[RMDB]
RNA sequence: GGGAACGACUCGAGUAGAGUCGAAAAGCGAUAGUCUGGAGCUGUUUCAAAUUCAAGGAGAAUUGAGUCAUAGACUAUUUUAGCCUGCUAUACAUCCUUGAAAUCAACUUGGAUGUCACUAUUGAUAAGUAUCCGGCAUAUUCGUAUGCCGGAUACUAAAAGAAACAACAACAACAAC
Reactivity to 2A3 in 0.01 (KOAc 150mM, MgCl2 10mM, bicine 150mM(pH8.5), 24C), signal-to-noise 4, nucleotides 027 to 126: g040c030g000a040u010a000g010u000c010u040g070g040a020g000c040u000g180u110u110u090c030a060a040a050u010u010c040a080a140g300g020a240g110a090a070u000u030g030a010g020u020c040a030u080a010g010a000c000u000a040u020u040u030u010a010g030c030c000u020g190c020u130a100u020a290c000a000u000c010c000u010u000g120a150a110a060u270c030a030a170c010u000u010g000g000a000u010g050u060c010a040c070u150a140u120u190g140a110u170a160
Reactivity to DMS in 0.01 (KOAc 150mM, MgCl2 10mM, bicine 150mM(pH8.5), 24C), signal-to-noise 2, nucleotides 027 to 126: g020c090g000a070u000a000g000u010c000u010g020g000a220g010c020u000g060u010u010u080c090a050a030a060u000u010c040a130a210g000g040a170g030a000a020u000u000g020a030g070u000c060a030u120a010g000a000c000u000a000u000u000u020u020a000g000c010c030u000g000c090u000a060u010a000c000a020u000c030c000u010u000g010a030a070a130u070c300a100a060c040u000u000g000g000a060u000g000u000c180a020c090u000a040u100u020g010a130u040a070
Description:
Structure probing data (2A3 and DMS) for a 177-nucleotide construct. Source: RMDB library OK1LIB, as collected in RNAgym. For 2A3 the reverse transcriptase was SuperScript II with manganese.